Chemical mapping of a 177-nucleotide RNA with 2A3 and DMS. DMS adducts were read by reverse transcription with MarathonRT. Reactivities are given for positions 27 through 126.
[RMDB]
RNA sequence: GGGAACGACUCGAGUAGAGUCGAAAAAGGGGGAGAUAGGGUCGUGAGGCAACUCGUCAGAGAAGACGUUAAAACUAAAUCGAAGUAAAUGCUAACGACGAAAAGUUUGCAUUGGCCGCCUAACAGCAAUACAAGUCCGUUUCGACGGACUUGUAUUAAAAGAAACAACAACAACAAC
Reactivity to 2A3 in 0.01 (KOAc 150mM, MgCl2 10mM, bicine 150mM(pH8.5), 24C), signal-to-noise 2, nucleotides 027 to 126: a000g040g000g010g010g000a070g020a070u060a040g060g000g000u060c060g020u090g070a030g030g010c020a000a020c000u030c040g030u000c000a000g010a020g010a230a040g000a020c070g010u030u020a000a000a010a000c000u020a050a020a040u170c090g050a030a000g040u080a090a020a030u020g010c030u010a010a000c050g090a060c100g050a050a030a030a030g000u020u010u020g000c010a000u020u050g010g000c020c000g040c020c000u050a070a040c050a050g040c030
Reactivity to DMS in 0.01 (KOAc 150mM, MgCl2 10mM, bicine 150mM(pH8.5), 24C), signal-to-noise 4, nucleotides 027 to 126: a090g000g000g020g010g000a060g000a060u020a060g020g000g020u000c040g030u030g000a150g000g040c070a100a090c130u050c020g000u010c020a010g010a190g010a090a020g000a000c000g000u020u080a000a000a020a020c040u000a040a100a110u030c160g000a080a140g000u020a040a020a050u000g010c020u000a010a030c030g000a210c220g010a110a080a080a080g000u000u000u000g000c000a040u020u000g000g020c040c070g000c030c050u020a060a060c160a140g010c100